[RMDB]
RNA sequence: GGGAACGACUCGAGUAGAGUCGAAAAAAGGAAUGAUCAAAUGGCAAGAUCAUCAGGACCCAAGUACUCCUCAUACAGGGACUGGAAACCAGCCAGAGGGCGGAGGUCAUCCAGGUAGCGCCAUUGGCGGUGGAUCCGGUUUCGACCGGAUCCACCGAAAAGAAACAACAACAACAAC
Reactivity to 2A3 in 0.01 (KOAc 150mM, MgCl2 10mM, bicine 150mM(pH8.5), 24C), signal-to-noise 3, nucleotides 027 to 126: a020a020g190g000a190a040u010g000a000u050c030a030a200a130u130g100g070c070a040a030g000a050u000c000a010u000c010a010g080g080a250c000c000c000a000a020g090u020a090c030u000c080c000u040c020a120u110a200c070a080g060g000g000a000c000u000g010g050a000a050a030c010c000a040g070c010c010a100g150a170g100g070g010c110g020g140a080g000g000u000c070a070u000c040c020a010g080g040u100a030g030c020g000c050c000a050u020u080g070g000
Reactivity to DMS in 0.01 (KOAc 150mM, MgCl2 10mM, bicine 150mM(pH8.5), 24C), signal-to-noise 1, nucleotides 027 to 126: a160a020g000g020a060a000u020g000a040u000c000a090a090a050u030g020g020c020a070a070g010a050u000c000a010u020c000a060g000g000a100c000c000c010a060a210g000u030a140c150u060c000c030u010c060a160u020a040c140a230g010g000g010a020c000u080g000g000a050a200a030c080c010a080g010c040c100a170g000a080g020g020g060c000g060g000a210g000g000u000c200a100u010c000c000a000g000g010u000a060g000c230g000c000c050a060u030u030g000g020

Source information
Source: RMDB library OK1LIB, as collected in RNAgym. This 177-nucleotide RNA was probed chemically with 2A3 and DMS. The DMS profile rests on 1,324 reads.